[RMDB]
RNA sequence: GGGAACGACUCGAGUAGAGUCGAAAACAGACUCACUUCGGUGAGUCUGAAAGGAGUAAUCGAUAGCGAUAACUACCAGAUUACUCAAGGGUAGUGACAAAAAAAGUUAGAGCUUCGGCUCUAACAACGCAGUAUAUACGUUCGCGUAUAUACUGCGAAAAGAAACAACAACAACAAC
Reactivity to DMS in 0.01 (KOAc 150mM, MgCl2 10mM, bicine 150mM(pH8.5), 24C), signal-to-noise 3, nucleotides 027 to 126: c030a010g000a020c000u000c000a000c000u000u010c150g020g020u010g010a010g010u000c000u000g000a020a090a090g020g010a010g010u000a010a010u000c000g010a040u000a030g000c060g000a140u010a130a180c010u000a010c020c000a170g020a020u000u000a000c000u000c030a090a110g020g000g020u000a070g010u010g010a050c170a000a010a040a070a080a080a140g000u000u000a010g000a010g010c010u000u020c240g010g010c010u000c010u000a010a000c000a040a100
Reactivity to 2A3 in 0.01 (KOAc 150mM, MgCl2 10mM, bicine 150mM(pH8.5), 24C), signal-to-noise 4, nucleotides 027 to 126: c000a010g010a010c000u000c000a000c000u030u050c130g120g000u000g000a000g000u000c000u000g000a000a000a000g070g000a010g010u010a000a010u010c030g080a220u160a110g080c080g090a060u080a240a090c000u000a000c010c010a010g000a010u010u020a000c000u000c040a060a100g060g000g020u040a040g010u040g070a050c140a050a180a020a020a000a000a020g010u000u000a000g000a010g000c010u020u040c240g060g000c000u000c000u010a010a000c000a010a000
Chemical mapping of a 177-nucleotide RNA with DMS and 2A3. The RNA was probed in 150 mM KOAc, 10 mM MgCl2 and 150 mM bicine (pH 8.5) at 24 C. The data come from the RNA Mapping Database (RMDB), library M2PK50. For DMS, 3,470 sequencing reads were counted. For 2A3, 5,233 sequencing reads were counted.